Notes: The record gives the reactivity of an RNA of 207 nucleotides to 2A3. Source: RMDB library OK3TST, as collected in RNAgym.

[RMDB]
RNA sequence: GGGAACGACUCGAGUAGAGUCGAAAAAUUACGCACAUAUGGUAUACACCAUCAUAUUGUUGGCAGCACCUUGGGCAGCAAAGAGCAAGGACGAAUCAAGCGGAUUGUCAGAAGUUAACAGUAUAAGAGCACUGUAUGCCAAUUCAAUCAAAUCAGCCGAAAUGGAGUGGUUCGCCACUCCAUUUCGAAAAGAAACAACAACAACAAC
Reactivity to 2A3 in 0.01 (KOAc 150mM, MgCl2 10mM, bicine 150mM(pH8.5), 24C), signal-to-noise 2, nucleotides 027 to 156: a000u180u090a040c030g020c070a030c020a050u180a050u060g060g010u040a050u030a060c040a050c100c000a020u040c010a030u150a000u060u040g040u010u030g030g020c000a010g040c010a090c010c040u050u040g030g020g040c030a090g020c010a100a130a040g050a010g000c030a050a070g020g020a050c080g090a070a030u030c080a120a000g020c070g100g040a070u060u060g050u060c070a060g020a150a010g030u020u130a060a000c030a010g010u000a070u040a170a060g040a000g100c040a020c050u030g000u000a030u030g040c000c000a000a000u100u120c050a020a090u060c010a070a000a160u090c030a020g110c010